[RMDB]
Structure probing data (DMS and 2A3) for a 207-nucleotide construct. 2A3 adducts were read by reverse transcription with SuperScript II with manganese. Reactivities are given for positions 27 through 156.
RNA sequence: GGGAACGACUCGAGUAGAGUCGAAAAAAGGAAUUAGAGUGCCUUCAUGCUAAGGGUUUGAUAUCUGCUAAAACCCGGUGCAUUCAUCAAUGCAGGUUAAGCCAAAGGGAUGUCCCGACCGGAGGCCAAAAGUUCGCUACGUUCGCGUAGCGAACAAGAUUAACAUGGCGUUCGCGCCAUGUUAAUCAAAAGAAACAACAACAACAAC
Reactivity to DMS in 0.01 (KOAc 150mM, MgCl2 10mM, bicine 150mM(pH8.5), 24C), signal-to-noise 2, nucleotides 027 to 156: a050a040g000g030a050a020u000u000a070g020a140g010u010g130c000c010u000u000c020a080u030g040c030u010a300a170g010g000g020u000u000u000g010a100u000a050u000c050u010g020c100u030a160a080a020a040c010c000c000g020g030u000g030c000a010u000u010c090a120u000c070a090a140u010g000c030a130g000g000u000u010a070a100g020c020c020a040a300a300g000g000g050a130u000g000u010c000c020c010g000a100c020c040g010g010a300g000g000c000c020a050a040a040a160g010u010u000c000g030c000u000a010c010g070u000u010c280g020c020g050u000a000g000c030g010a000a000c000a040a070
Reactivity to 2A3 in 0.01 (KOAc 150mM, MgCl2 10mM, bicine 150mM(pH8.5), 24C), signal-to-noise 2, nucleotides 027 to 156: a000a000g150g020a070a020u180u120a170g050a050g140u140g020c030c020u030u110c060a090u100g000c020u040a010a030g000g000g000u040u010u000g020a020u040a000u070c020u040g010c000u000a010a030a020a020c000c000c050g010g000u010g000c010a090u160u180c030a050u080c040a100a110u140g000c000a030g020g070u100u150a070a010g000c010c010a010a010a010g000g000g000a040u060g010u030c000c000c000g000a000c020c010g000g000a010g000g000c000c000a000a030a000a040g000u000u000c010g000c010u000a000c000g000u010u030c030g010c000g040u000a000g000c000g010a000a000c000a000a000